[RMDB]
RNA sequence: GGGAACGACUCGAGUAGAGUCGAAAAGAUAUGGACUCUGCUAGCCUGCGACUCGGAAACGAGUCGAUAGGCUUGGACCAGAGGUCCUAAGUCAAAACGGCAUAGGAGGUUCGCCUCCUAUGCCGAACCAUUCCCGAAAGUUCGCUUUCGGGAAUGGAAAAGAAACAACAACAACAAC
Reactivity to DMS in 0.01 (KOAc 150mM, MgCl2 10mM, bicine 150mM(pH8.5), 24C), signal-to-noise 2, nucleotides 027 to 126: g010a020u000a300u020g000g010a220c010u000c000u010g000c010u000a030g000c000c000u000g020c000g010a000c000u010c000g020g010a100a060a110c020g000a000g000u000c000g000a010u000a010g000g010c040u000u000g010g010a110c300c000a030g000a010g010g000u000c000c010u000a030a160g000u010c050a120a080a120a170c020g010g000c000a000u000a000g010g000a000g000g010u000u010c240g000c000c000u020c000c000u010a000u000g010c000c020g010a000a030